[RMDB]
RNA sequence: GGGAACGACUCGAGUAGAGUCGAAAAAGAGUUAUCUCAUGUUGAUCCAAAAUAGUUGAGUCUAUGUGUCUCCACCUCAAUCAGUCAUUGGAUGUGGUCCUUCCUGGGAAGAGUGUGCCACUGAGUGAGGCAGAUCUCUUCAGUGUUCCACAGCUGAGUCAUGAUCCUAUUUCGAUAGGAUCAUGACAAAAGAAACAACAACAACAAC
Reactivity to DMS in 0.01 (KOAc 150mM, MgCl2 10mM, bicine 150mM(pH8.5), 24C), signal-to-noise 2, nucleotides 027 to 156: a070g010a120g000u010u000a070u000c020u020c010a130u010g030u000u010g000a090u010c050c040a040a060a100a130u000a120g010u000u000g020a080g000u000c020u000a060u010g020u010g000u000c010u020c060c040a090c120c010u000c030a080a060u000c050a150g010u010c050a190u000u000g050g020a050u010g010u010g010g000u000c040c040u000u000c030c010u000g010g040g030a040a070g000a100g010u000g020u000g030c290c020a300c020u010g000a030g000u000g020a080g010g000c020a190g040a110u010c000u010c000u010u010c000a090g020u000g000u000u000c050c010a060c030a110g040c080u000g000a210
Reactivity to 2A3 in 0.01 (KOAc 150mM, MgCl2 10mM, bicine 150mM(pH8.5), 24C), signal-to-noise 5, nucleotides 027 to 156: a000g110a020g020u130u120a160u080c030u020c060a050u150g040u090u080g070a100u070c040c010a040a020a080a090u170a030g050u030u070g040a030g040u000c040u160a130u110g130u030g060u090c030u010c040c020a040c000c020u050c020a070a110u060c010a050g200u070c050a090u050u090g040g000a020u060g030u050g050g000u000c000c020u050u050c010c020u040g020g060g000a030a030g040a010g040u060g020u050g040c010c010a030c040u050g030a070g120u070g030a060g010g000c030a020g040a220u060c000u000c000u030u010c020a040g010u010g010u120u060c020c020a050c010a050g080c040u040g020a000
An RNA of 207 nucleotides, treated with DMS and 2A3 and read out base by base. 2A3 adducts were read by reverse transcription with SuperScript II with manganese. The 2A3 profile rests on 3,073 reads.